[RMDB]
RNA sequence: GGGAACGACUCGAGUAGAGUCGAAAAGCGUACUACCUUCGCACCUUGGGAGCGUCCGGUAGUUUCUCCCAAAUAGGAGAAGUAUCCAACGGACGCUUUGAUCAAGGUGAACUACGAAGGUAUCGCAAACUAAGUGAGGGUUCGCCCUCACUUAGAACAAAUGAGAUUUGUUCGCAAAUCUCAUUUGAAAAGAAACAACAACAACAAC
Reactivity to DMS in 0.01 (KOAc 150mM, MgCl2 10mM, bicine 150mM(pH8.5), 24C), signal-to-noise 3, nucleotides 027 to 156: g000c010g010u000a060c060u000a010c000c010u000u000c000g010c000a040c010c000u000u000g000g020g000a020g000c020g010u010c010c000g030g010u000a150g010u000u000u000c000u000c000c000c020a060a180a260u010a030g010g010a010g000a040a030g010u000a110u000c110c020a050a030c030g010g020a010c000g020c010u000u010u000g010a130u030c010a010a020g010g020u020g000a060a160c020u010a130c020g010a050a020g020g010u000a000u000c020g000c000a130a090a240c000u000a010a020g010u000g010a030g010g030g010u000u000c300g010c020c000c000u000c010a000c010u000u000a000g010a090a270
Reactivity to 2A3 in 0.01 (KOAc 150mM, MgCl2 10mM, bicine 150mM(pH8.5), 24C), signal-to-noise 4, nucleotides 027 to 156: g010c000g050u090a080c020u000a000c010c010u000u010c010g000c010a000c000c000u010u010g020g000g000a000g000c010g010u000c010c000g020g030u050a040g030u020u010u010c010u010c000c030c010a220a270a130u300a060g000g000a010g000a000a020g050u090a100u180c110c060a070a070c060g010g010a000c040g030c000u020u010u020g020a040u060c000a000a000g000g000u000g000a000a050c060u080a050c020g000a000a000g040g010u010a010u090c000g000c000a040a000a030c000u000a000a000g010u000g000a000g060g010g030u070u120c220g120c010c000c000u000c000a000c000u000u000a000g000a000a000
An RNA of 207 nucleotides, treated with DMS and 2A3 and read out base by base. For DMS the reverse transcriptase was MarathonRT. The 2A3 profile rests on 4,384 reads. The DMS profile rests on 9,277 reads. The reactions ran in a buffer of 150 mM KOAc, 10 mM MgCl2 and 150 mM bicine (pH 8.5), at 24 C.